[RMDB]
The data come from the RNA Mapping Database (RMDB), library OK1LIB. An RNA of 177 nucleotides, treated with DMS and 2A3 and read out base by base. In probing experiments dimethyl sulfate is read out at A N1 and C N3, which are open when not base-paired. For 2A3, 1,027 sequencing reads were counted. 2A3 adducts were read by reverse transcription with SuperScript II with manganese. The DMS profile rests on 1,125 reads.
RNA sequence: GGGAACGACUCGAGUAGAGUCGAAAACAGACUCGAGCGAAAGCUCGGCGAAAGCCGCGUACAUGUGAAAGUCGGCGGGUGUACAGUCGACAGUUACUCUUCGGAGUAACAAUAGAAACAACAACAACACCACGGAUACGUUCGCGUAUCCGUGGUGAAAAGAAACAACAACAACAAC
Reactivity to DMS in 0.01 (KOAc 150mM, MgCl2 10mM, bicine 150mM(pH8.5), 24C), signal-to-noise 1, nucleotides 027 to 126: c080a080g010a100c080u000c100g000a060g000c000g000a070a120a260g000c000u000c020g020g000c010g010a090a090a010g010c050c060g000c080g000u040a010c070a120u040g000u000g110a150a110a070g000u000c000g000g000c020g020g000g000u020g000u140a060c000a110g000u000c000g060a130c130a090g000u000u000a000c000u020c000u000u000c140g030g000a010g000u000a000a000c000a010a100u000a030g000a210a060a060c060a000a000c260a020a100c300a000a050
Reactivity to 2A3 in 0.01 (KOAc 150mM, MgCl2 10mM, bicine 150mM(pH8.5), 24C), signal-to-noise 2, nucleotides 027 to 126: c050a040g070a100c010u020c040g000a020g000c000g010a110a040a080g000c000u000c010g000g000c000g160a120a000a000g050c030c000g010c010g030u060a060c050a130u180g070u050g190a090a180a050g030u020c000g000g130c000g020g010g010u070g030u070a010c040a010g040u000c000g070a000c050a030g000u020u000a000c000u020c000u020u080c230g130g000a000g000u010a000a000c000a000a000u170a040g140a070a060a000c030a050a000c000a000a060c000a000a000
The reactions ran in a buffer of 150 mM KOAc, 10 mM MgCl2 and 150 mM bicine (pH 8.5), at 24 C.